RNA sequence: GGGAACGACUCGAGUAGAGUCGAAAAGGAUAACUAUAGAGGCACACCUCAUUGCCUUCAGUGCGGAAGUGGUUUUCUCAACUCCAAUCAAAAAGGCAGAAAAAGUAAAGCAACGCGAUUUUCGCGCUGCAUACCCCUUAUUCGUAAGGGGUAUGCAAAAAGAAACAACAACAACAAC
Reactivity to 2A3 in 0.01 (KOAc 150mM, MgCl2 10mM, bicine 150mM(pH8.5), 24C), signal-to-noise 6, nucleotides 027 to 126: g060g020a100u070a160a040c050u090a080u080a250g040a040g010g000c060a040c010a070c070c000u070c030a100u020u130g010c000c000u010u030c030a040g010u000g010c000g000g030a110a070g050u040g070g100u070u080u220u120c120u030c020a000a030c010u000c010c000a000a000u000c010a040a050a010a000a010g000g000c010a000g030a000a030a000a010a000g100u140a050a070a010g060c040a060a030c020g000c010g030a060u050u020u150u240c010g010c010g000c020
Reactivity to DMS in 0.01 (KOAc 150mM, MgCl2 10mM, bicine 150mM(pH8.5), 24C), signal-to-noise 5, nucleotides 027 to 126: g010g000a090u030a050a060c080u010a160u010a090g030a070g000g000c100a070c170a150c010c000u010c080a110u020u010g000c000c000u000u000c080a300g000u010g000c300g000g000a060a020g020u010g000g000u010u040u030u050c140u020c030a030a040c000u000c000c020a030a210u020c010a010a050a050a010a020g000g000c000a010g000a040a060a060a050a060g000u030a050a060a080g010c090a040a070c030g000c010g000a100u010u000u000u010c000g000c010g010c110
Annotation
This 177-nucleotide RNA was probed chemically with 2A3 and DMS. 2A3 adducts were read by reverse transcription with SuperScript II with manganese. The RNA was probed in 150 mM KOAc, 10 mM MgCl2 and 150 mM bicine (pH 8.5) at 24 C.